[RMDB]
RNA sequence: GGGAACGACUCGAGUAGAGUCGAAAAAGAGCCGUAUCGAUACGUCGAUACGGCUCAAGGGCCGUCGGAUCCACCCCGCGGGUGACCACGAGGUAGUCGCGCAUGACGAUGCCGUGCCGGUUCUCAAAGAUUUACUGUAUUUCGAUACAGUAAAUCUAAAAGAAACAACAACAACAAC
Reactivity to DMS in 0.01 (KOAc 150mM, MgCl2 10mM, bicine 150mM(pH8.5), 24C), signal-to-noise 7, nucleotides 027 to 126: a090g000a010g010c000c000g020u000a010u000c000g020a030u000a070c210g020u000c000g010a010u000a010c000g020g010c000u000c000a000a020g010g000g020c020c030g000u000c090g010g000a090u010c050c050a060c020c020c020c110g010c140g010g010g010u020g010a100c040c010a060c060g000a070g010g010u000a060g020u000c020g010c070g010c160a100u020g010a090c050g000a080u010g010c010c010g010u010g000c020c010g010g010u000u000c000u000c020a100a130
Reactivity to 2A3 in 0.01 (KOAc 150mM, MgCl2 10mM, bicine 150mM(pH8.5), 24C), signal-to-noise 9, nucleotides 027 to 126: a000g000a000g000c000c000g000u000a000u000c000g010a010u020a070c240g100u010c000g010a000u000a000c000g020g010c000u000c000a000a000g000g010g000c000c000g020u040c060g020g020a070u070c050c010a020c020c010c000c040g090c110g020g000g020u040g050a040c010c010a020c080g030a100g040g010u060a060g150u040c010g000c010g000c140a110u180g030a090c040g020a020u060g070c000c010g000u010g020c010c000g060g010u030u000c030u000c000a110a140
Overview: Structure probing data (DMS and 2A3) for a 177-nucleotide construct. 2A3 adducts were read by reverse transcription with SuperScript II with manganese. DMS adducts were read by reverse transcription with MarathonRT. Reactivities are given for positions 27 through 126.